[RMDB]
RNA sequence: GGGAACGACUCGAGUAGAGUCGAAAAAGAGACGCGACGACGCGCAACAACUCUCGUCUGCAGGAUCGCCGCUCUGGUGUCUAGACACGCCAGCUUGCGUCGGCGCGUCGGAGUCCGAGGCUGGCGACCCUCGUGCGUCGUUCGCGACGCACGAGGGAAAAGAAACAACAACAACAAC
Reactivity to 2A3 in 0.01 (KOAc 150mM, MgCl2 10mM, bicine 150mM(pH8.5), 24C), signal-to-noise 2, nucleotides 027 to 126: a000g180a030g000a020c030g000c000g030a020c000g020a010c010g000c010g070c020a030a020c030a080a050c120u080c060u100c100g070u000c030u100g100c050a040g100g020a100u070c010g000c020c000g090c030u080c070u050g020g010u130g030u000c020u030a060g000a000c030a000c000g000c000c020a020g010c080u150u210g040c000g090u040c020g020g070c000g010c000g040u010c010g000g010a020g000u050c020c000g020a070g030g070c090u120g020g000c000g050a050
The record gives the reactivity of an RNA of 177 nucleotides to 2A3. For 2A3, 672 sequencing reads were counted. 2A3 adducts were read by reverse transcription with SuperScript II with manganese. The reactions ran in a buffer of 150 mM KOAc, 10 mM MgCl2 and 150 mM bicine (pH 8.5), at 24 C. It was measured as part of the RMDB library OK1LIB.